[RMDB]
Conditions: 150 mM KOAc, 10 mM MgCl2 and 150 mM bicine (pH 8.5), 24 C. This 177-nucleotide RNA was probed chemically with DMS. Reactivities are given for positions 27 through 126. The data come from the RNA Mapping Database (RMDB), library VIROID.
RNA sequence: GGGAACGACUCGAGUAGAGUCGAAAAAGGAGUAAUCCUAAACAGGGUUUUCACCCUUCCUUUAGUUUCCUUCCUCUCCUGGAGAGGUCUUCUGCCCUAGCCCGGUCUUCGAAGCUUCCUUUGGCUAUCACUAGAUAGCGUUCGCGCUAUCUAGUGAAAAAGAAACAACAACAACAAC
Reactivity to DMS in 0.01 (KOAc 150mM, MgCl2 10mM, bicine 150mM(pH8.5), 24C), signal-to-noise 2, nucleotides 027 to 126: a010g010g020a020g010u000a040a040u010c110c000u010a020a010a060c190a020g000g010g000u000u000u000u010c190a080c000c010c000u000u010c040c020u000u000u000a020g010u010u010u000c000c000u000u000c020c000u010c040u000c020c090u000g010g000a060g000a050g020g000u000c030u000u000c050u010g010c010c020c030u000a130g010c050c010c130g020g010u000c060u010u010c070g000a090a110g010c090u010u010c030c020u000u000u010g010g030c060u000a090